[RMDB]
RNA sequence: GGGAACGACUCGAGUAGAGUCGAAAAGAAUAAAUAGGGAGGUCAGGGUCAGUAGACCGCCGCUGAACCCAGGAUAACCCUCAACGUCGGCGGUCGAAGCGACGAAAGACAGAGACACGUCGCAAAGGGUAUUAGUACUAUUCGUAGUACUAAUACCAAAAGAAACAACAACAACAAC
Reactivity to DMS in 0.01 (KOAc 150mM, MgCl2 10mM, bicine 150mM(pH8.5), 24C), signal-to-noise 7, nucleotides 027 to 126: g010a150a130u040a050a100a120u050a050g000g010g010a080g020g010u000c050a060g010g000g000u000c000a020g000u000a070g000a010c010c000g010c000c010g030c000u000g000a050a030c020c010c020a090g000g020a050u020a110a140c100c010c000u000c150a100a100c210g000u020c040g010g010c010g000g010u000c000g010a070a090g020c010g000a010c000g000a100a050a090g010a100c190a070g010a110g020a070c110a150c000g000u000c000g010c010a050a050a100g010
Reactivity to 2A3 in 0.01 (KOAc 150mM, MgCl2 10mM, bicine 150mM(pH8.5), 24C), signal-to-noise 9, nucleotides 027 to 126: g040a030a070u240a120a080a050u220a050g070g060g020a190g070g070u050c050a040g010g000g010u000c000a000g000u020a030g010a000c000c000g000c000c000g000c000u010g020a100a110c000c010c010a020g040g040a030u100a220a250c010c010c000u050c050a120a120c060g170u100c030g010g000c000g010g000u000c000g000a020a000g000c000g010a000c000g050a100a060a030g100a030c080a030g140a000g000a080c010a010c090g000u010c000g000c010a040a050a030g050
Conditions: 150 mM KOAc, 10 mM MgCl2 and 150 mM bicine (pH 8.5), 24 C. Chemical mapping of a 177-nucleotide RNA with DMS and 2A3. DMS adducts were read by reverse transcription with MarathonRT. For DMS, 19,500 sequencing reads were counted. For 2A3, 34,116 sequencing reads were counted. It was measured as part of the RMDB library OK1LIB.